[RMDB]
RNA sequence: GGGAACGACUCGAGUAGAGUCGAAAAAGAAAGGAGGCCCGGUUACCUAUAUAGAGAUAAUGAUACCGGCGGGCGCGCGCUGGCUGGCCUCCGCAUUGAAUAGAGUAGGUACACGCGCGCGAAAAAACUAACAUAGGAUGUUCGCAUCCUAUGUUAGAAAAGAAACAACAACAACAAC
Reactivity to 2A3 in 0.01 (KOAc 150mM, MgCl2 10mM, bicine 150mM(pH8.5), 24C), signal-to-noise 1, nucleotides 027 to 126: a000g010a010a050a000g000g000a000g000g000c000c000c000g000g010u030u010a010c020c000u040a040u030a000u130a240g100a020g040a110u150a190a120u140g050a050u070a180c010c010g000g040c050g030g100g000c020g020c000g020c010g000c020u000g080g010c000u010g040g000c000c000u050c020c010g020c000a050u050u230g070a020a060u080a090g040a030g100u020a050g000g000u050a040c010a020c000g030c000g000c000g000c030g000a060a010a030a000a000a000
Reactivity to DMS in 0.01 (KOAc 150mM, MgCl2 10mM, bicine 150mM(pH8.5), 24C), signal-to-noise 2, nucleotides 027 to 126: a100g010a090a080a100g010g000a040g000g000c030c000c260g020g010u010u000a040c020c010u000a070u010a190u010a130g000a150g010a080u000a040a050u000g000a170u010a080c010c010g000g010c050g000g010g030c000g020c000g020c000g010c010u000g010g000c080u000g020g010c010c000u010c000c020g020c080a040u000u010g000a060a190u000a090g000a110g020u000a020g000g000u000a070c090a050c100g010c000g000c010g020c000g000a000a020a050a070a060a060